An RNA of 177 nucleotides, treated with DMS and 2A3 and read out base by base.

RNA sequence: GGGAACGACUCGAGUAGAGUCGAAAACUCCACUGGCGCAUAAACCCUUGAUCGUCGGCAAAGCGGUUAUUCGGCGUAGUGGCUCCGCUGGCGACGACGGGCGCAUCAAUCGCCAGCAGCGAGCCUGCCGGGAGUAUGGUUUCGACCAUACUCCCGGAAAAGAAACAACAACAACAAC
Reactivity to DMS in 0.01 (KOAc 150mM, MgCl2 10mM, bicine 150mM(pH8.5), 24C), signal-to-noise 2, nucleotides 027 to 126: c040u010c000c030a150c080u020g000g020c000g000c060a110u030a030a070a100c060c020c000u000u020g020a050u000c030g040u010c050g000g070c100a090a040a140g020c060g000g000u030u000a030u060u000c030g010g040c050g030u000a000g000u040g000g020c020u000c000c010g000c000u000g000g020c000g010a040c060g000a130c060g010g000g000c060g020c100a160u020c140a230a170u010c000g000c000c000a010g010c020a070g060c050g050a000g000c000c020u000g000
Reactivity to 2A3 in 0.01 (KOAc 150mM, MgCl2 10mM, bicine 150mM(pH8.5), 24C), signal-to-noise 3, nucleotides 027 to 126: c020u040c000c000a020c030u060g050g010c000g010c020a020u090a120a190a080c000c020c000u030u120g050a070u120c030g010u010c010g050g010c040a050a060a010g020c040g080g000u090u090a090u150u090c040g030g020c030g060u020a030g100u030g050g000c010u000c000c010g000c000u000g000g000c000g000a020c000g000a020c020g020g070g000c070g040c030a040u090c050a000a070u030c000g010c000c000a000g010c010a000g030c050g000a010g000c000c000u010g000